[RMDB]
RNA sequence: GGGAACGACUCGAGUAGAGUCGAAAAUGCAAGUAGUGCCAUUGUUGGAAUCACCGUACCUAUUUAGGUUUACGCUCCAAGAUCGGUGGAUAGCAGCCCUAUCAAUAUCUAGGAGAACUGUGCUAUGAAAACGGUAUUGGCUUCGGCCAAUACCGAACUGUUGUUAUGUCUUCGGACAUAACAACAGAAAAGAAACAACAACAACAAC
Reactivity to DMS in 0.01 (KOAc 150mM, MgCl2 10mM, bicine 150mM(pH8.5), 24C), signal-to-noise 2, nucleotides 027 to 156: u000g010c020a050a120g020u000a070g010u000g020c020c020a170u000u000g010u010u000g010g010a080a140u000c030a030c040c000g040u000a090c040c010u010a220u000u000u000a050g000g030u000u000u000a040c050g000c030u000c030c010a070a110g000a060u000c100g030g000u010g000g010a110u000a060g040c010a160g010c090c050c020u000a100u000c040a120a110u000a110u000c060u010a110g010g000a100g010a050a100c050u000g010u000g020c040u000a130u000g000a070a070a090a130c010g020g000u000a000u000u000g000g000c020u010u010c300g060g000c000c000a030a000u000a010c010c000g010a000a030
Reactivity to 2A3 in 0.01 (KOAc 150mM, MgCl2 10mM, bicine 150mM(pH8.5), 24C), signal-to-noise 5, nucleotides 027 to 156: u140g000c020a040a070g050u060a020g040u070g070c020c030a050u040u120g100u090u080g040g030a070a050u100c010a020c040c020g030u040a030c010c020u070a170u150u160u240a040g020g000u020u060u070a030c040g010c010u020c010c030a030a020g020a070u060c060g030g100u050g060g020a030u040a020g000c030a020g010c010c010c000u030a040u080c040a060a060u020a020u230c030u040a010g000g040a060g020a050a030c030u030g040u070g090c020u050a030u170g110a060a070a030a030c020g000g010u000a000u000u000g000g000c000u000u030c160g070g000c010c010a000a000u000a000c000c000g000a000a000